[RMDB]
RNA sequence: GGGAACGACUCGAGUAGAGUCGAAAAGGAGAGAUUUGGGUAGUAAGUGAUUGAACAGGUGUGUACUGAGGCCAAGCAACACAUGGGCUGUCAGCCAGUGGGAACAGAACAGAAUUCUGUCCUAUGGAGCUUACAUUCUGGUGGUUAGGACUGAUAAGUCCAUUUACCCUUUCGAGGGUAAAUGGACAAAAGAAACAACAACAACAAC
Reactivity to DMS in 0.01 (KOAc 150mM, MgCl2 10mM, bicine 150mM(pH8.5), 24C), signal-to-noise 2, nucleotides 027 to 156: g040g010a120g000a090g060a030u030u010u000g010g000g030u010a060g040u010a060a070g040u010g020a180u010u000g000a070a100c050a090g020g060u040g040u000g030u010a040c060u000g000a130g100g010c020c020a110a060g000c020a010a020c040a080c090a090u000g030g040g020c040u010g000u000c040a060g000c000c020a250g090u010g000g000g010a080a080c010a030g000a030a060c010a130g000a000a300u000u010c010u010g040u000c020c000u000a110u010g010g010a230g040c030u010u000a060c060a150u020u000c010u010g020g000u000g040g000u000u000a050g000g020a110c050u000g010a110u020a130a210
Reactivity to 2A3 in 0.01 (KOAc 150mM, MgCl2 10mM, bicine 150mM(pH8.5), 24C), signal-to-noise 4, nucleotides 027 to 156: g030g010a020g010a010g000a020u060u090u170g020g020g000u040a040g030u030a110a070g020u040g070a100u110u070g060a080a020c020a050g050g000u020g000u010g000u040a090c030u050g020a040g010g000c000c010a030a010g070c010a050a060c030a010c010a100u050g000g060g000c030u030g030u030c010a000g000c020c000a020g020u080g040g010g010a110a050c000a010g000a010a030c060a050g170a120a020u080u000c000u010g010u020c000c000u020a040u040g040g010a050g020c000u020u010a020c000a040u030u100c020u040g000g040u010g010g010u040u060a050g010g010a040c020u030g020a030u080a180a030

An RNA of 207 nucleotides, treated with DMS and 2A3 and read out base by base. The data come from the RNA Mapping Database (RMDB), library OK3TST. DMS adducts were read by reverse transcription with MarathonRT. For DMS, 2,109 sequencing reads were counted. The RNA was probed in 150 mM KOAc, 10 mM MgCl2 and 150 mM bicine (pH 8.5) at 24 C.